[RMDB]
RNA sequence: GGGAACGACUCGAGUAGAGUCGAAAAGAUAUGGAUCCACAGGACAUGUGUCCUUAUCGGAAACGAUAAGCAUACACAACAGCCUGUUGGAUCCUAAGUCAAAAGUGGUCACGUUCGCGUGACCACAGUCCUUACUCGUCUUCGGACGAGUAAGGACAAAAGAAACAACAACAACAAC
Reactivity to DMS in 0.01 (KOAc 150mM, MgCl2 10mM, bicine 150mM(pH8.5), 24C), signal-to-noise 1, nucleotides 027 to 126: g020a050u000a020u000g000g000a000u000c000c000a000c000a030g050g020a030c130a200u030g030u000g020u020c300c000u000u000a000u000c000g040g000a000a000a030c000g000a000u000a000a020g020c150a060u020a300c000a000c000a010a020c090a200g040c000c000u000g000u030u010g080g020a000u020c000c000u000a000a020g000u010c000a140a030a120a070g000u000g000g010u000c000a000c000g000u000u000c180g050c020g020u000g000a000c000c000a000c000a000
Reactivity to 2A3 in 0.01 (KOAc 150mM, MgCl2 10mM, bicine 150mM(pH8.5), 24C), signal-to-noise 2, nucleotides 027 to 126: g000a000u010a000u000g000g000a010u030c040c000a000c000a010g000g030a040c220a300u300g020u010g010u020c020c000u000u000a010u020c000g020g040a000a020a000c020g000a010u000a020a000g040c000a090u300a300c020a000c040a160a300c160a240g010c010c000u040g050u160u020g030g010a000u020c000c010u000a010a000g000u010c020a050a050a010a150g000u000g020g010u000c010a010c050g030u050u090c300g020c020g120u010g000a000c000c010a000c010a010

The record gives the reactivity of an RNA of 177 nucleotides to DMS and 2A3.
Reactivities are given for positions 27 through 126.
The RNA was probed in 150 mM KOAc, 10 mM MgCl2 and 150 mM bicine (pH 8.5) at 24 C.
2A3 adducts were read by reverse transcription with SuperScript II with manganese.
The DMS profile rests on 724 reads.